[RMDB]
An RNA of 207 nucleotides, treated with 2A3 and read out base by base. For 2A3 the reverse transcriptase was SuperScript II with manganese. The RNA was probed in 150 mM KOAc, 10 mM MgCl2 and 150 mM bicine (pH 8.5) at 24 C. The 2A3 profile rests on 429 reads. As a SHAPE reagent, 2A3 marks flexible, mostly unpaired nucleotides at the ribose 2'-OH.
RNA sequence: GGGAACGACUCGAGUAGAGUCGAAAAACUCAAAGGUAUUCAAGUGAUCCAUCUAUGCAAUAACACUUGUGAGCUUUCAAUAAUAUAUGAUGAAGUUGAAUGCCUACAAAAAGAAUUUGAAGCACUUGCCCUCCAAUUUUCAGAUGUCAACAGACACCAGAAUUGAACGGUUCGCCGUUCAAUUCUGAAAAGAAACAACAACAACAAC
Reactivity to 2A3 in 0.01 (KOAc 150mM, MgCl2 10mM, bicine 150mM(pH8.5), 24C), signal-to-noise 1, nucleotides 027 to 156: a000c060u090c060a080a190a000g010g010u070a050u060u020c000a010a010g080u010g130a070u050c050c010a000u050c010u080a190u120g030c030a130a090u080a300a090c080a020c080u110u030g000u010g060a070g000c040u070u090u070c130a020a000u120a170a000u090a100u050a060u270g020a030u020g020a090a090g060u000u000g020a000a000u000g030c000c000u000a090c080a000a130a080a000a010g080a080a120u060u120u150g050a080a000g000c030a030c060u060u110g010c000c000c000u010c040c020a040a010u120u110u010u000c030a020g040a100u000g040u000c000a080a170c010a190g020a000c000a000c020